[RMDB]
RNA sequence: GGGAACGACUCGAGUAGAGUCGAAAAGUGCCUCGUCGGCCCGGCAUGCCAACCUGAUCCGAAGUUCAAGGUGGUUUCUCUGGCCUUCCAGAGAGAUGCACGUCGGAAGAACCGACGAACAAACCUUAAAACAAAACGACGUUCGCGUCGUUUUGAAGCAGAGUAUUAUCUUCGGAUAAUACUCUGCAAAAGAAACAACAACAACAAC
Reactivity to DMS in 0.01 (KOAc 150mM, MgCl2 10mM, bicine 150mM(pH8.5), 24C), signal-to-noise 1, nucleotides 027 to 156: g000u020g000c070c060u000c020g040u000c020g050g010c000c000c010g000g050c000a070u000g030c010c120a090a090c000c020u000g020a110u000c130c130g010a230a160g020u010u000c060a050a040g010g020u000g010g000u000u010u000c000u010c030u000g000g030c190c140u020u000c030c000a020g010a030g020a040g020a090u000g000c040a060c020g020u000c010g000g000a100a120g010a070a040c010c070g020a010c070g020a100a100c030a030a120a210c030c000u000u010a060a080a160a160c000a010a030a010a020c000g030a000c010g000u000u020c300g000c010g020u000c000g000u000u000u000u000g000a080a180
Reactivity to 2A3 in 0.01 (KOAc 150mM, MgCl2 10mM, bicine 150mM(pH8.5), 24C), signal-to-noise 4, nucleotides 027 to 156: g060u030g070c010c020u000c000g000u000c000g030g010c000c000c010g000g000c010a020u080g010c010c030a090a070c010c000u000g010a030u070c000c040g080a080a040g030u040u060c070a090a020g010g010u000g020g010u020u110u030c000u000c000u000g000g030c040c110u240u180c030c000a000g010a000g010a000g010a020u140g040c040a000c060g010u010c000g000g030a110a060g020a110a090c000c000g010a000c000g020a040a010c020a010a080a040c020c020u250u300a070a150a050a060c000a000a000a000a000c000g000a000c010g010u020u130c250g010c000g060u000c000g000u010u010u000u000g000a010a000
Description: Structure probing data (DMS and 2A3) for a 207-nucleotide construct. The DMS profile rests on 1,995 reads. For 2A3, 3,142 sequencing reads were counted. For 2A3 the reverse transcriptase was SuperScript II with manganese. The RNA was probed in 150 mM KOAc, 10 mM MgCl2 and 150 mM bicine (pH 8.5) at 24 C.